[RMDB]
Chemical mapping of a 177-nucleotide RNA with 2A3 and DMS. The 2A3 profile rests on 20,022 reads. For DMS the reverse transcriptase was MarathonRT. Conditions: 150 mM KOAc, 10 mM MgCl2 and 150 mM bicine (pH 8.5), 24 C.
RNA sequence: GGGAACGACUCGAGUAGAGUCGAAAAACUGACCAGCGCUGGCUGAUCGACAAGUCGGCGCUGGUGCGGCUCACGGACAGCCCUGACAUGGAAAUCUGGUCGAACCGGAUCGAACGCGGCCUGGUACCCCAGAUAUUGAAUUCGUUCAAUAUCUGGGAAAAGAAACAACAACAACAAC
Reactivity to 2A3 in 0.01 (KOAc 150mM, MgCl2 10mM, bicine 150mM(pH8.5), 24C), signal-to-noise 9, nucleotides 027 to 126: a000c050u060g030a010c000c000a000g000c000g000c000u010g010g000c010u010g030a170u160c080g090a060c060a080a010g000u000c000g010g000c000g000c000u000g000g000u000g000c000g010g000c000u020c030a030c020g050g040a030c030a040g020c000c000c020u050g030a030c030a100u110g060g030a060a070a030u040c040u060g030g010u030c040g020a070a060c040c010g020g010a040u060c030g020a060a030c050g010c030g070g020c000c010u030g020g040u140a110c010
Reactivity to DMS in 0.01 (KOAc 150mM, MgCl2 10mM, bicine 150mM(pH8.5), 24C), signal-to-noise 6, nucleotides 027 to 126: a140c050u010g000a020c000c000a010g010c000g030c010u000g010g000c010u000g000a100u030c170g000a100c120a120a000g010u000c000g010g000c000g020c000u010g000g000u000g010c040g020g010c020u000c040a070c070g000g010a090c090a100g010c030c010c030u000g010a100c110a070u000g000g000a070a100a060u010c040u000g000g000u020c060g010a060a290c030c010g020g000a050u000c040g000a100a090c110g010c060g000g000c030c010u000g000g010u000a080c150